[RMDB]
About this RNA
An RNA of 177 nucleotides, treated with 2A3 and DMS and read out base by base. Source: RMDB library TTRDEL, as collected in RNAgym. 2A3 adducts were read by reverse transcription with SuperScript II with manganese.

RNA sequence: GGGAACGACUCGAGUAGAGUCGAAAAGAUAUGGACUCAUGGGAGUCGGUGUCGGAAACGACAUGGCCGACAUCGAUCAUGGUCCUAAGUCACGCGUCGUAGCACAGCUUCGGCUGUGCUACGACAAGUACUGGUUGUUCUUCGGAACAACCAGUACAAAAGAAACAACAACAACAAC
Reactivity to 2A3 in 0.01 (KOAc 150mM, MgCl2 10mM, bicine 150mM(pH8.5), 24C), signal-to-noise 2, nucleotides 027 to 126: g020a020u080a060u180g000g010a020c020u020c300a010u040g020g110g110a200g100u030c020g030g010u000g020u030c000g030g080a080a240a130c150g200a090c300a280u210g300g040c010c000g020a010c000a030u030c010g000a080u280c000a000u010g050g000u010c000c000u000a080a020g020u040c010a000c120g100c130g030u010c010g000u000a000g000c020a010c000a000g000c020u140u230c300g000g020c020u000g090u040g000c000u000a000c030g000a000c000a000a000
Reactivity to DMS in 0.01 (KOAc 150mM, MgCl2 10mM, bicine 150mM(pH8.5), 24C), signal-to-noise 1, nucleotides 027 to 126: g000a060u010a300u000g000g000a030c000u030c020a010u010g000g020g010a220g010u000c000g050g000u000g000u000c000g000g020a030a020a100c170g000a140c300a110u030g000g060c000c000g000a010c000a000u000c020g020a020u000c050a020u010g000g030u000c000c000u000a040a120g020u000c040a080c210g010c200g000u010c010g010u000a010g020c010a020c020a000g020c000u000u020c260g020g030c000u000g000u000g010c020u010a000c000g000a000c020a020a060